[RMDB]
RNA sequence: GGGAACGACUCGAGUAGAGUCGAAAAGAGCUCAGGGGACUCUUCGUCCACCUCCUCACCACGAACUACACAUACUUCUUCCGUGAGUCCCUGCACUUCUCGGUGGUACGGGAGUAUCUCCAGGGAACUAGUGAGAGAGUUUCGACUCUCUCACUAGAAAAGAAACAACAACAACAAC
Reactivity to 2A3 in 0.01 (KOAc 150mM, MgCl2 10mM, bicine 150mM(pH8.5), 24C), signal-to-noise 3, nucleotides 027 to 126: g040a020g030c020u050c110a040g030g000g000g020a020c010u030c000u230u100c140g040u010c000c000a050c020c010u060c010c010u040c010a070c010c030a040c030g060a060a030c050u180a050c120a010c010a120u170a120c040u050u060c000u100u010c040c020g040u030g050a000g010u030c020c000c000u050g010c060a050c040u120u020c070u050c060g000g030u020g020g020u090a010c010g010g040g020a040g000u030a080u030c010u000c010c000a020g020g000g020a040a040
Reactivity to DMS in 0.01 (KOAc 150mM, MgCl2 10mM, bicine 150mM(pH8.5), 24C), signal-to-noise 4, nucleotides 027 to 126: g010a140g010c030u000c060a100g030g000g010g000a090c010u010c070u000u010c080g010u000c020c010a040c020c010u010c060c020u000c050a090c050c020a100c160g010a090a080c070u000a050c120a070c120a040u000a110c090u000u010c030u010u000c080c090g000u010g010a060g000u000c020c040c000u000g010c080a070c100u000u010c030u010c060g010g020u000g010g010u010a020c020g010g010g000a070g030u000a050u000c010u000c020c010a130g000g010g010a060a190